[RMDB]
The record gives the reactivity of an RNA of 177 nucleotides to 2A3 and DMS. High 2A3 reactivity points to a flexible backbone, as in loops and unpaired stretches. Reactivities are rounded to 0.1 and cut off at 0 and 3. 2A3 adducts were read by reverse transcription with SuperScript II with manganese. Conditions: 150 mM KOAc, 10 mM MgCl2 and 150 mM bicine (pH 8.5), 24 C.
RNA sequence: GGGAACGACUCGAGUAGAGUCGAAAAGAUAUGGAUCCACUUGUCAGAUUGAAAUGUCGGAAACGACAUAUGUAGAUCUUGGAUUUAGUGGAGUCCUAAGUCAAAUCGAAGCGUUCGCGCUUCGAAACACUUAAUACUAGUUCGCUAGUAUUAAGUGAAAAGAAACAACAACAACAAC
Reactivity to 2A3 in 0.01 (KOAc 150mM, MgCl2 10mM, bicine 150mM(pH8.5), 24C), signal-to-noise 9, nucleotides 027 to 126: g040a010u090a020u170g000g000a010u000c000c000a000c010u010u010g020u030c010a000g010a030u010u020g020a080a020a020u010g000u000c010g010g030a060a060a060c010g010a000c010a000u040a040u050g020u010a010g000a020u000c000u040u200g260g020a060u300u300u140a010g000u010g020g020a020g100u090c000c000u030a110a030g070u040c040a050a030a180u050c010g010a000a000g000c010g030u070u210c300g000c000g000c080u000u000c000g000a000a010a000
Reactivity to DMS in 0.01 (KOAc 150mM, MgCl2 10mM, bicine 150mM(pH8.5), 24C), signal-to-noise 9, nucleotides 027 to 126: g010a050u010a300u000g000g010a300u000c000c000a010c000u000u000g000u000c000a020g000a010u000u000g000a100a060a020u000g010u000c000g000g000a100a100a210c000g010a010c000a010u000a020u010g010u000a170g000a000u000c000u000u010g020g010a010u000u010u000a010g030u000g000g000a030g000u000c000c000u000a050a130g010u010c040a080a080a170u000c010g000a010a010g010c000g030u000u010c230g020c010g010c000u000u000c000g000a010a080a160